[RMDB]
Chemical mapping of a 207-nucleotide RNA with DMS and 2A3.
It was measured as part of the RMDB library M2RFPK.
DMS adducts were read by reverse transcription with MarathonRT.

RNA sequence: GGGAACGACUCGAGUAGAGUCGAAAAUAGCGAAGUAGGAUUUUAUGCGUCAAGUGUUCACAGGCUGGGGAGUCGCCGUGAAACGAAAAGCAGAAAGCGUGCUGCUUACGAUAUAAUUUCAGCACCCAUAAGAAGUCUCUGUUCGCAGAGACUUCAAGACGGAUAAAUAGUUCGCUAUUUAUCCGUCAAAAGAAACAACAACAACAAC
Reactivity to DMS in 0.01 (KOAc 150mM, MgCl2 10mM, bicine 150mM(pH8.5), 24C), signal-to-noise 2, nucleotides 027 to 156: u000a100g010c030g040a060a090g030u000a060g030g010a080u000u000u000u000a080u010g010c020g010u000c040a080a180g010u010g000u000u000c020a080c030a080g030g000c030u000g050g020g030g010a130g030u000c030g020c040c000g010u010g000a000a020a110c030g000a140a050a050a080g010c020a040g010a070a040a110g010c120g020u000g020c020u000g010c030u000u000a070c020g010a100u000a070u000a040a080u000u010u000c040a090g020c010a070c010c020c030a160u000a100a140g000a020a020g010u000c010u010c010u020g030u000u020c240g020c010a020g020a020g000a010c000u000u000c000a010a130
Reactivity to 2A3 in 0.01 (KOAc 150mM, MgCl2 10mM, bicine 150mM(pH8.5), 24C), signal-to-noise 6, nucleotides 027 to 156: u110a010g020c010g030a050a010g060u120a070g040g090a040u060u080u040u070a050u120g020c020g020u030c060a080a050g030u040g060u220u020c030a020c060a100g040g010c030u110g030g010g040g010a030g080u080c030g000c020c000g020u020g010a030a010a000c020g020a030a060a030a040g000c010a010g060a050a100a000g110c090g050u080g030c010u000g000c010u030u030a030c020g010a010u010a010u030a190a090u050u050u050c010a000g020c020a030c010c020c010a050u080a130a090g000a000a000g000u000c000u000c000u010g010u030u020c040g000c030a000g000a000g000a000c000u000u000c000a000a000

The reactions ran in a buffer of 150 mM KOAc, 10 mM MgCl2 and 150 mM bicine (pH 8.5), at 24 C.